[RMDB]
Structure probing data (DMS and 2A3) for a 177-nucleotide construct.
RNA sequence: GGGAACGACUCGAGUAGAGUCGAAAAGAAGAGAAAGGAGACACAGGGACAGUCUCCAGAGGUUCCUAAGGCCUCGAUCGCGCCUGCCGGGAAUCAUGGACACCCGGUUGUCCAUGAGAGAAGAAGACAGGAUACGUCACUUCGGUGACGUAUCCUGAAAAGAAACAACAACAACAAC
Reactivity to DMS in 0.01 (KOAc 150mM, MgCl2 10mM, bicine 150mM(pH8.5), 24C), signal-to-noise 1, nucleotides 027 to 126: g000a040a070g000a070g040a040a230a040g000g000a070g000a040c000a070c140a210g000g000g000a090c170a140g010u000c000u000c000c020a020g010a040g000g000u020u000c050c000u000a050a110g000g000c010c010u020c000g000a020u060c090g020c050g000c140c000u000g000c060c010g000g000g020a060a070u000c000a000u000g000g000a000c000a050c010c220c140g000g000u060u000g040u000c000c000a020u000g000a060g040a120g010a070a000g000a080a100g000a110
Reactivity to 2A3 in 0.01 (KOAc 150mM, MgCl2 10mM, bicine 150mM(pH8.5), 24C), signal-to-noise 1, nucleotides 027 to 126: g060a020a000g140a000g040a040a040a050g040g000a110g000a020c120a010c240a190g080g080g030a050c030a020g030u070c000u000c000c000a000g000a020g000g000u040u070c010c000u000a060a070g000g000c000c000u020c000g000a030u060c000g000c010g000c040c000u000g000c000c000g070g000g000a030a040u030c060a000u000g030g000a000c010a040c020c140c080g000g000u070u020g000u020c000c000a000u000g030a060g000a000g000a210a010g050a020a000g060a010
For 2A3, 764 sequencing reads were counted. Conditions: 150 mM KOAc, 10 mM MgCl2 and 150 mM bicine (pH 8.5), 24 C.